[RMDB]
RNA sequence: GGGAACGACUCGAGUAGAGUCGAAAACAGAGCUUUCACCCCCAGAAACUGCAAGUUGGGACUUGUCCCUAGGAAAAUCCAGUUGCUGCCAAGGUCGUGCAGUCACUCAGCCCUGGAGUCAAGCCAGCAACCUUCCGAAAUUCGUUUCGGAAGGUUGAAAAGAAACAACAACAACAAC
Reactivity to DMS in 0.01 (KOAc 150mM, MgCl2 10mM, bicine 150mM(pH8.5), 24C), signal-to-noise 2, nucleotides 027 to 126: c020a090g000a120g030c070u000u000u000c060a220c070c010c040c000c020a140g000a050a040a050c020u000g030c070a120a070g010u010u010g020g010g000a060c050u000u000g010u010c020c010c030u030a080g010g010a060a040a110a060u020c070c070a040g010u010u000g020c020u000g000c030c070a130a160g010g020u000c140g020u000g000c050a000g010u000c150a030c030u000c080a010g010c130c060c030u000g000g000a060g020u000c060a050a060g020c030c000a110g020